[RMDB]
This 207-nucleotide RNA was probed chemically with DMS and 2A3. High DMS reactivity at an A or C suggests that its Watson-Crick edge is free. For DMS the reverse transcriptase was MarathonRT.
RNA sequence: GGGAACGACUCGAGUAGAGUCGAAAAGGCAGAUAGUAUUGACACAGUUCGUGAUGUCAACGCAGAUCCCACUACUAGUAGCAUAGUUACUGAUGGGGGCACCUCAUUCACGACUCAUCACAAUGUAUUCGAUGUCCAGCCAGGAUUGACAGAUGGGUCUCUAAACCUGUUUCGACAGGUUUAGAGAAAAAGAAACAACAACAACAAC
Reactivity to DMS in 0.01 (KOAc 150mM, MgCl2 10mM, bicine 150mM(pH8.5), 24C), signal-to-noise 4, nucleotides 027 to 156: g020g010c040a110g020a130u000a120g000u000a040u000u000g000a030c010a060c040a090g010u010u010c110g010u010g000a140u000g010u000c020a030a050c020g030c050a130g000a140u000c010c010c010a190c050u000a060c050u000a050g010u010a080g000c070a170u000a120g020u000u000a070c040u010g000a060u010g010g000g020g000g020c080a050c050c020u000c040a110u000u000c080a090c020g010a050c020u000c010a080u000c050a070c060a080a120u000g030u000a080u000u000c060g000a070u010g020u000c020c010a130g000c050c030a110g000g010a090u000u010g010a150c070a060g010a070u000g010g010g010
Reactivity to 2A3 in 0.01 (KOAc 150mM, MgCl2 10mM, bicine 150mM(pH8.5), 24C), signal-to-noise 5, nucleotides 027 to 156: g050g020c030a020g030a080u070a070g100u090a130u120u060g010a000c020a000c020a080g090u150u120c060g020u110g030a080u040g040u030c040a010a030c100g020c030a020g020a170u070c000c010c020a020c020u050a020c020u020a020g050u020a000g040c040a140u030a070g040u070u060a050c040u070g070a180u060g010g000g000g030g000c030a050c010c010u070c010a090u100u070c030a020c070g030a020c010u000c030a060u030c010a020c030a150a080u100g030u080a120u080u100c050g060a060u060g030u030c020c010a010g000c020c020a020g000g050a060u090u120g030a020c010a010g070a050u060g000g020g030